[RMDB]
RNA sequence: GGGAACGACUCGAGUAGAGUCGAAAAGAAAAUAGCGUAAUGGACAUUGAGAAUGUACGCUAAGUGUGUGUUGUAUAAAUAACGUCCAAUUCAACACACACACAGUUGGACCUAAUGUCCAAAAAAAGUACGAUAAAUCGUUCGCGAUUUAUCGUACAAAAGAAACAACAACAACAAC
Reactivity to 2A3 in 0.01 (KOAc 150mM, MgCl2 10mM, bicine 150mM(pH8.5), 24C), signal-to-noise 2, nucleotides 027 to 126: g120a000a100a010a070u070a000g010c000g000u030a060a040u090g040g000a020c030a010u050u070g030a010g060a140a090u170g010u070a010c010g000c000u020a130a070g000u000g010u000g010u000g000u000u000g060u020a070u040a150a190a080u160a100a050c080g060u020c050c010a000a000u060u000c010a030a000c000a000c010a000c010a000c000a000c020a060g100u180u120g080g010a020c040c000u020a030a020u060g000u000c000c050a100a000a000a000a000a000a000
Reactivity to DMS in 0.01 (KOAc 150mM, MgCl2 10mM, bicine 150mM(pH8.5), 24C), signal-to-noise 2, nucleotides 027 to 126: g000a060a030a070a190u000a050g000c010g010u000a000a020u000g000g000a020c000a060u000u010g010a100g000a110a070u000g050u000a020c000g030c000u000a080a180g020u000g030u000g020u000g000u000u010g000u000a050u000a040a050a080u020a080a050c200g000u010c070c100a010a100u000u010c010a000a010c010a010c000a000c000a010c000a050c160a120g010u000u000g010g000a080c020c060u000a050a000u000g010u000c000c010a000a000a060a050a060a040a110
Chemical mapping of a 177-nucleotide RNA with 2A3 and DMS. Values are in units of 0.01, from 0 to 300, in steps of 10. Conditions: 150 mM KOAc, 10 mM MgCl2 and 150 mM bicine (pH 8.5), 24 C. For DMS the reverse transcriptase was MarathonRT. The data come from the RNA Mapping Database (RMDB), library M2PK90. In probing experiments dimethyl sulfate is read out at A N1 and C N3, which are open when not base-paired. The 2A3 profile rests on 2,576 reads.